[RMDB]
RNA sequence: GGGAACGACUCGAGUAGAGUCGAAAAUGUGGUGGUCAAUGGCAAAGUUUCUACACUUGUCAAACAAGUGUUAGACUUGCUUAAUAAGGGUAUGCAACUUUUGCAUACAAAGGUCUCCUGGGCUGGUUAAUCGGUGCCUUCGGGCACCGAAAAAGAAACAACAACAACAAC
Reactivity to 2A3 in 0.01 (KOAc 150mM, MgCl2 10mM, bicine 150mM(pH8.5), 24C), signal-to-noise 1, nucleotides 027 to 129: u060g000u020g000g000u000g000g010u080c030a020a000u000g000g000c000a000a000a130g030u130u060u010c000u020a010c000a000c000u000u020g000u010c040a030a130a170c000a000a000g000u000g000u000u030a000g050a010c010u000u040g000c000u030u030a000a050u270a060a040g020g000g000u000a020u000g000c000a030a100c080u040u130u240u030g000c000a000u010a000c010a010a000a050g020g000u000c000u000c040c000u000g000g000g000c000u000g020g010u040u030a050a020
Reactivity to DMS in 0.01 (KOAc 150mM, MgCl2 10mM, bicine 150mM(pH8.5), 24C), signal-to-noise 4, nucleotides 027 to 129: u020g050u050g050g000u030g000g000u070c160a120a110u010g000g050c020a040a070a020g000u000u000u000c080u030a040c010a030c000u050u000g010u000c300a090a140a300c020a030a000g010u020g040u030u030a020g000a060c030u010u040g050c020u030u030a080a150u050a100a210g020g060g000u010a050u030g010c000a050a150c230u010u020u040u000g040c000a020u000a030c040a060a110a090g010g010u030c040u030c020c040u030g000g020g050c080u010g010g010u040u030a100a050